[RMDB]
RNA sequence: GGGAACGACUCGAGUAGAGUCGAAAAGCUCUGCAACAAUACGGUGUGAUAACAUGACUGUUCAUUAUCACCCAUAUAUGAGGGAAUUGCCAGGGAGUAUAAUGAUACAAGUCUAUGACAAUAGAUAGAGACCUAUCUGGUUCGCCAGAUAGGUCUCAAAAGAAACAACAACAACAAC
Reactivity to 2A3 in 0.01 (KOAc 150mM, MgCl2 10mM, bicine 150mM(pH8.5), 24C), signal-to-noise 2, nucleotides 027 to 126: g020c020u030c020u050g000c060a090a030c010a030a120u080a060c070g000g000u090g000u000g080a010u080a170a030c090a080u090g100a040c020u110g100u110u110c000a000u010u010a000u040c030a030c000c040c080a010u060a030u030a000u090g070a190g060g100g140a130a230u110u090g080c010c030a070g020g000g000a040g020u090a040u000a020a140u150g070a000u030a150c040a080a060g010u000c010u030a050u010g110a070c020a030a050u000a070g030a020u050a080
Reactivity to DMS in 0.01 (KOAc 150mM, MgCl2 10mM, bicine 150mM(pH8.5), 24C), signal-to-noise 1, nucleotides 027 to 126: g000c000u000c000u000g000c100a130a140c030a000a040u020a000c060g000g000u020g000u000g000a030u020a090a030c070a100u010g070a100c120u050g000u050u000c020a000u010u000a000u000c090a140c000c000c000a030u050a090u040a220u040g010a180g000g000g040a150a080u000u040g020c000c100a160g000g030g000a140g000u120a070u020a000a010u020g060a140u040a020c100a060a130g000u000c000u000a020u040g000a020c180a060a060u000a030g000a070u000a110

The data come from the RNA Mapping Database (RMDB), library OK1LIB.
This 177-nucleotide RNA was probed chemically with 2A3 and DMS.
For DMS, 1,190 sequencing reads were counted.
Conditions: 150 mM KOAc, 10 mM MgCl2 and 150 mM bicine (pH 8.5), 24 C.
The 2A3 profile rests on 998 reads.